[RMDB]
RNA sequence: GGGAACGACUCGAGUAGAGUCGAAAAACUGCAAACGAAAACUCAUACGCUGUAGCUGCUUAGUUCAGCCCAGCUGCCAAUAGACUGCCUGCCCGUGGCGGUCUUGCGGUAUCAACAUUACGGGAUACGCUUGCCUAUCACACCUGAAUAAGCGAGACCGUUCUAAUGACUUCGGUCAUUAGAACGGAAAAGAAACAACAACAACAAC
Reactivity to 2A3 in 0.01 (KOAc 150mM, MgCl2 10mM, bicine 150mM(pH8.5), 24C), signal-to-noise 2, nucleotides 027 to 156: a010c150u260g040c120a120a110a050c110g160a070a110a030a030c280u300c120a090u110a200c000g000c000u040g020u140a060g000c010u010g080c020u160u290a070g060u300u220c000a000g000c000c110c000a000g000c000u030g000c010c010a000a000u000a000g000a000c000u000g010c020c000u080g050c010c010c000g000u000g000g000c000g000g000u000c000u010u000g000c020g010g020u090a090u080c000a000a100c020a080u070u120a020c010g000g000g040a010u040a050c040g000c000u020u000g070c010c000u050a040u040c020a050c050a030c110c150u000g040a120a010u050a150a000g010c000g000a040g020a000
This 207-nucleotide RNA was probed chemically with 2A3.
The reactions ran in a buffer of 150 mM KOAc, 10 mM MgCl2 and 150 mM bicine (pH 8.5), at 24 C.
It was measured as part of the RMDB library ARCHII.
Values cover nucleotides 27 to 156.